[RMDB]
RNA sequence: GGGAACGACUCGAGUAGAGUCGAAAAACGAGUGAGAGUGAGAGUGUGUGAUCUCACGAGAACGAUCGAUCACGAGAGUGAUCGAGAGUGUACUCGAGAACUCUCGAGUGUUCGAGAUCACACGAACACGUACGAGUUCGAGUGUGAACGUUCUCACGGAAAUCAUGCUAUUCGUAGCAUGAUUUCCAAAAGAAACAACAACAACAAC
Reactivity to 2A3 in 0.01 (KOAc 150mM, MgCl2 10mM, bicine 150mM(pH8.5), 24C), signal-to-noise 5, nucleotides 027 to 156: a010c080g010a060g040u110g010a070g000a050g030u070g000a090g010a040g100u190g000u020g010u010g050a020u010c000u020c030a040c070g010a030g010a020a010c010g010a030u000c000g000a000u000c010a000c020g060a070g020a020g090u010g000a000u010c000g000a000g000a000g000u080g040u040a030c000u000c010g000a010g010a090a080c050u050c000u000c200g010a010g000u030g080u080u140c070g000a010g000a040u030c010a000c000a000c000g000a010a000c010a000c010g090u220a020c060g020a030g040u050u080c020g030a050g030u070g020u040g120a070a040c020g020u020u000c000u010c010a000c010
Reactivity to DMS in 0.01 (KOAc 150mM, MgCl2 10mM, bicine 150mM(pH8.5), 24C), signal-to-noise 3, nucleotides 027 to 156: a060c060g030a140g010u000g020a070g020a150g010u000g000a120g000a080g000u010g010u000g060u000g010a080u000c000u010c010a110c040g010a120g010a080a070c010g000a300u010c000g000a030u000c000a040c010g010a260g000a300g000u000g000a090u000c000g000a000g010a240g040u000g040u000a080c000u010c000g000a080g000a200a090c300u000c010u000c040g010a100g040u000g000u010u000c080g000a080g020a040u000c050a050c050a070c010g020a040a050c040a020c010g010u000a160c060g000a120g000u000u000c010g020a140g030u000g010u000g000a070a150c070g010u000u020c000u020c000a100c300
Chemical mapping of a 207-nucleotide RNA with 2A3 and DMS. 2A3 adducts were read by reverse transcription with SuperScript II with manganese.